[RMDB]
RNA sequence: GGGAACGACUCGAGUAGAGUCGAAAAUGUGACAAUUCGUUGUCACAAAAAAUCCUAAGUCCUGAGGGCUCUGACAUGCGACCAUCGGAAACGAUGGAUCGCAACAGCAGAGCCUACCCACCAGGAUAUGGAAAAAAUGGCUCAUUCGUGAGCCAAACUGAGACACCUAAUUCGUUAGGUGUCUCAGAAAAGAAACAACAACAACAAC
Reactivity to 2A3 in 0.01 (KOAc 150mM, MgCl2 10mM, bicine 150mM(pH8.5), 24C), signal-to-noise 2, nucleotides 027 to 156: u080g000u000g010a000c000a000a030u040u040c240g080u080u040g000u030c020a010c010a010a090a000a000a000a030u040c020c000u020a130a000g000u000c000c000u010g000a020g010g010g050c010u010c000u010g110a120c010a130u030g000c010g000a010c010c000a030u000c000g080g000a150a030a030c010g010a000u000g020g030a120u000c010g010c010a020a010c040a000g020c000a000g000a000g000c010c000u000a000c000c000c000a060c000c000a000g010g000a000u020a020u020g040g000a050a040a040a040a000a120u080g010g000c010u000c010a030u080u070c200g060u040g010a000g000c000c000a000a000a020
Reactivity to DMS in 0.01 (KOAc 150mM, MgCl2 10mM, bicine 150mM(pH8.5), 24C), signal-to-noise 1, nucleotides 027 to 156: u000g060u010g000a000c010a030a090u000u000c300g020u000u000g000u000c000a020c010a000a010a050a070a080a140u000c040c000u010a050a290g020u000c010c000u000g000a150g030g000g040c030u000c000u000g000a040c100a300u000g000c050g000a090c000c000a010u000c040g050g050a080a070a210c010g050a010u010g000g000a020u020c000g050c000a010a010c020a170g000c020a020g010a050g030c020c000u000a000c000c000c000a300c090c010a020g000g000a020u010a200u000g000g000a000a030a100a050a120a150u010g000g030c000u000c000a090u000u020c110g010u000g000a020g020c000c000a020a000a040
An RNA of 207 nucleotides, treated with 2A3 and DMS and read out base by base. For DMS, 1,653 sequencing reads were counted. DMS adducts were read by reverse transcription with MarathonRT. The data come from the RNA Mapping Database (RMDB), library RNAMAK. For 2A3 the reverse transcriptase was SuperScript II with manganese.